[RMDB]
RNA sequence: GGGAACGACUCGAGUAGAGUCGAAAACCCACCAAGUUCUUAUCAAGAGAAGCAGAGGUACUGGGCCGACGAAGCUUCAGCAACCGGUGUAAUGGCGAAAGCCAUGACCAAGGUGCUAAAUCCAGCAAGCUCGAACAGCUUGGAAGAUAAGAACAGAACUACCACUAUCAUUCGUGAUAGUGGUAGUAAAAGAAACAACAACAACAAC
Reactivity to 2A3 in 0.01 (KOAc 150mM, MgCl2 10mM, bicine 150mM(pH8.5), 24C), signal-to-noise 4, nucleotides 027 to 156: c010c000c000a000c010c030a140a040g000u010u000c000u000u000a010u000c020a070a040g070a020g000a140a000g000c010a000g010a010g020g000u010a030c000u000g010g000g000c010c010g070a300c020g000a040a000g000c000u000u010c010a000g000c010a030a100c010c010g030g000u090g070u170a090a050u000g010g000c000g040a070a000a000g000c000c000a010u010g010a010c000c020a060a120g000g000u000g000c000u030a010a040a080u050c010c000a000g010c010a010a000g000c000u080c130g140a150a080c050a060g000c000u000u020g010g050a060a060g000a010u010a000a000g000a000a000c020a000g020a020
Reactivity to DMS in 0.01 (KOAc 150mM, MgCl2 10mM, bicine 150mM(pH8.5), 24C), signal-to-noise 2, nucleotides 027 to 156: c010c000c010a080c110c060a120a150g010u010u020c020u000u000a010u020c020a090a210g000a300g030a070a040g030c010a030g010a130g010g010u010a080c030u000g010g030g050c030c020g010a150c120g000a160a120g030c010u000u020c000a060g030c000a080a040c010c000g050g090u020g010u030a040a030u010g010g020c010g010a160a090a300g010c000c010a020u000g020a110c020c020a150a130g020g070u000g010c010u010a060a070a070u020c020c030a100g020c020a070a030g020c020u010c020g010a100a220c120a080g000c010u000u010g000g010a100a140g000a050u000a020a050g000a050a020c030a120g000a030